[RMDB]
RNA sequence: GGGAACGACUCGAGUAGAGUCGAAAAGAUAUGGACAAGCUCGCUUUGAUCAGGUUCGAAGUCCUCGGAAACGAGGACGUAGUUGGGAGCGAACUUGUCCUAAGUCAAAGGGGUGUUCGCACCCCAACAAUAACCCAGAGUUCGCUCUGGGUUAUUGAAAAGAAACAACAACAACAAC
Reactivity to DMS in 0.01 (KOAc 150mM, MgCl2 10mM, bicine 150mM(pH8.5), 24C), signal-to-noise 5, nucleotides 027 to 126: g010a030u000a300u010g010g010a020c010a010a020g020c020u000c010g020c010u000u010u000g010a140u000c070a110g010g010u010u010c080g010a090a300g000u000c000c000u000c010g000g010a080a070a150c010g010a020g000g010a000c020g000u000a080g010u010u000g010g010g010a030g020c000g010a020a020c000u010u000g020u010c000c000u000a010a090g010u000c040a060a090a160g010g000g000g010u000g020u000u010c210g020c010a020c010c000c000c010a010a010
Reactivity to 2A3 in 0.01 (KOAc 150mM, MgCl2 10mM, bicine 150mM(pH8.5), 24C), signal-to-noise 3, nucleotides 027 to 126: g020a000u060a020u120g010g010a000c000a010a000g010c020u010c000g040c060u170u180u180g150a190u300c110a130g300g070u190u090c040g090a150a000g000u000c000c010u000c000g000g000a060a050a040c000g000a000g010g000a010c010g000u010a000g000u020u090g090g040g010a040g020c000g000a010a010c010u010u010g000u000c000c000u000a010a010g030u010c030a030a020a170g000g000g010g000u030g010u010u090c140g050c060a010c000c000c000c000a000a010